[RMDB]
RNA sequence: GGGAACGACUCGAGUAGAGUCGAAAACGAACCGUCUGCUAGUAUGGUCCGGCAUCUGGACGCAGCCGUCUCCAGUGCAAAGUAAAGCAGUAGCAAUCCAUACGGUGAUACUCGCCAUUUCGUCACCCAACCUCUCGUAAUUCGUUACGAGAGGUUGAAAAGAAACAACAACAACAAC
Reactivity to 2A3 in 0.01 (KOAc 150mM, MgCl2 10mM, bicine 150mM(pH8.5), 24C), signal-to-noise 4, nucleotides 027 to 126: c030g020a020a030c040c010g070u080c030u050g030c010u030a040g050u050a110u100g040g040u040c030c040g030g010c020a060u090c050u040g040g030a030c090g000c060a060g130c040c080g080u030c020u000c020c000a020g020u020g040c030a070a090a070g040u170a100a090a000g010c010a030g040u070a030g000c020a020a060u000c020c020a040u050a110c040g010g000u030g020a020u050a070c020u020c060g040c050c020a040u070u070u050c030g020u010c030a120c050c020
Reactivity to DMS in 0.01 (KOAc 150mM, MgCl2 10mM, bicine 150mM(pH8.5), 24C), signal-to-noise 5, nucleotides 027 to 126: c080g000a060a080c140c050g000u000c040u010g020c040u010a100g020u000a040u000g000g010u000c040c050g010g000c050a030u010c030u010g010g000a050c140g020c050a140g030c080c100g000u000c080u010c010c010a040g020u000g000c020a060a090a120g020u000a040a070a070g010c010a070g020u000a060g020c040a080a080u000c030c020a070u010a080c050g010g010u000g000a140u000a060c050u000c040g000c170c070a120u000u010u000c050g010u010c120a140c060c030
The record gives the reactivity of an RNA of 177 nucleotides to 2A3 and DMS. Reactivities are given for positions 27 through 126. Conditions: 150 mM KOAc, 10 mM MgCl2 and 150 mM bicine (pH 8.5), 24 C.